Source information
An RNA of 177 nucleotides, treated with 2A3 and DMS and read out base by base. For 2A3 the reverse transcriptase was SuperScript II with manganese. The 2A3 profile rests on 1,330 reads.
[RMDB]
RNA sequence: GGGAACGACUCGAGUAGAGUCGAAAAUUUACACCAAGGGAAUUGUUCGGUUACCAAUUCGAUGUCGCCGAUAGUGACGUUUAUACUGAGUUUUUUGAGGCUACCUAUGAUGUACAACUGGCUGCCAGUGUCGUUAACUAUUCGUAGUUAACGACACAAAAGAAACAACAACAACAAC
Reactivity to 2A3 in 0.01 (KOAc 150mM, MgCl2 10mM, bicine 150mM(pH8.5), 24C), signal-to-noise 2, nucleotides 027 to 126: u030u030u090a050c030a040c000c030a060a020g070g000g020a000a070u080u060g090u210u110c010g030g000u010u060a050c010c050a070a070u050u070c020g060a060u100g020u050c020g000c030c000g080a070u100a060g110u100g020a030c030g060u020u130u060a090u030a070c070u070g080a100g150u050u040u010u020u090u080g050a040g010g010c000u010a020c000c000u030a060u160g050a080u130g040u130a030c040a060a060c080u020g040g020c020u000g050c000c010a040
Reactivity to DMS in 0.01 (KOAc 150mM, MgCl2 10mM, bicine 150mM(pH8.5), 24C), signal-to-noise 4, nucleotides 027 to 126: u010u010u000a130c060a170c030c070a070a110g010g010g020a040a070u010u000g000u000u010c030g030g000u000u000a100c140c060a060a060u000u000c050g010a060u010g000u000c050g010c020c060g000a140u010a080g020u010g010a100c060g000u000u000u010a110u010a110c140u000g010a110g010u000u000u010u000u020u020g010a160g000g010c020u000a040c030c030u000a060u010g000a070u000g020u000a060c160a030a090c080u000g010g010c030u010g010c030c040a110